[RMDB]
RNA sequence: GGGAACGACUCGAGUAGAGUCGAAAAUAAAAUCGUAGGGCGUGACGAUCGACGUAAAUCGCUCAAACUACUCGAGACCAAAGGAAUACGCUUCGGUAACUCGCUCUAAUCCCGAGCGAUAAAUGAAGAUACAGACAGAGUUCGCUCUGUCUGUAUCAAAAGAAACAACAACAACAAC
Reactivity to DMS in 0.01 (KOAc 150mM, MgCl2 10mM, bicine 150mM(pH8.5), 24C), signal-to-noise 2, nucleotides 027 to 126: u010a070a050a130a090u000c040g020u000a090g000g010g010c010g000u000g020a060c050g000a050u000c040g020a040c040g020u020a030a070a110u000c100g000c080u000c120a100a030a110c020u000a000c000u000c000g020a020g000a160c030c050a050a060a080g000g010a170a080u000a120c110g030c030u000u000c070g010g000u000a090a140c150u000c000g000c030u000c000u000a080a220u000c050c000c010g000a030g020c020g020a050u000a030a050a100u020g010a100a140
Reactivity to 2A3 in 0.01 (KOAc 150mM, MgCl2 10mM, bicine 150mM(pH8.5), 24C), signal-to-noise 2, nucleotides 027 to 126: u080a000a040a000a050u050c010g030u010a100g020g040g000c000g030u050g040a030c020g000a040u100c040g070a070c030g030u050a040a030a100u150c030g000c030u020c020a050a080a030c020u020a000c000u000c000g020a000g020a030c010c030a020a120a030g150g010a150a040u100a100c040g000c070u060u030c010g000g020u020a050a030c010u000c020g000c030u000c020u030a020a050u030c000c010c000g000a010g000c010g010a010u120a050a130a040u130g040a070a060
Structure probing data (DMS and 2A3) for a 177-nucleotide construct. Conditions: 150 mM KOAc, 10 mM MgCl2 and 150 mM bicine (pH 8.5), 24 C. 2A3 adducts were read by reverse transcription with SuperScript II with manganese. Values cover nucleotides 27 to 126.